[RMDB]
RNA sequence: GGGAACGACUCGAGUAGAGUCGAAAACACGCCACACGCAAGGUUGAUACUGAGAUUCCCAUGUGCAGCCAUUGUGAAGAGUAUCCGGUCCAUGUGACCGGCAUGGGAUCGCGGUUCAAGUAUUGCCACCGAUGCACUGAGUAACUUACUGGGAGGACAGGAUGAAUUGAUUCGUCAAUUCAUCCUGAAAAGAAACAACAACAACAAC
Reactivity to 2A3 in 0.01 (KOAc 150mM, MgCl2 10mM, bicine 150mM(pH8.5), 24C), signal-to-noise 6, nucleotides 027 to 156: c050a020c020g060c030c010a050c020a020c100g030c030a030a050g060g010u040u050g030a050u070a190c000u030g000a010g010a090u260u280c010c000c010a010u010g020u050g040c070a060g040c060c070a180u250u170g050u080g150a140a080g070a020g110u110a070u070c000c000g010g000u000c020c020a220u260g130u260g030a000c000c000g000g000c000a000u010g000g000g000a010u000c020g020c020g040g000u040u040c020a040a020g030u050a120u070u100g010c000c000a030c040c060g060a040u110g010c020a020c050u040g020a010g090u090a090a030c030u010u120a060c060u050g000g000g040a060g030g000a030
Reactivity to DMS in 0.01 (KOAc 150mM, MgCl2 10mM, bicine 150mM(pH8.5), 24C), signal-to-noise 2, nucleotides 027 to 156: c090a080c050g020c030c010a050c070a100c130g030c030a100a060g040g000u000u010g020a120u020a100c010u010g000a080g020a100u000u010c010c000c010a100u000g010u010g030c050a080g020c040c050a120u000u020g060u010g020a100a120g010a150g000u000a120u010c030c010g050g010u000c020c020a170u010g000u000g020a040c010c000g010g060c000a000u000g000g020g010a040u000c020g010c010g010g000u000u000c040a050a060g010u010a110u000u000g010c020c020a110c030c040g030a100u000g020c030a090c060u000g020a100g020u010a070a050c050u000u000a050c040u000g000g010g000a120g020g000a240

An RNA of 207 nucleotides, treated with 2A3 and DMS and read out base by base. The reactions ran in a buffer of 150 mM KOAc, 10 mM MgCl2 and 150 mM bicine (pH 8.5), at 24 C. It was measured as part of the RMDB library OK3TST. The 2A3 profile rests on 4,611 reads. For 2A3 the reverse transcriptase was SuperScript II with manganese.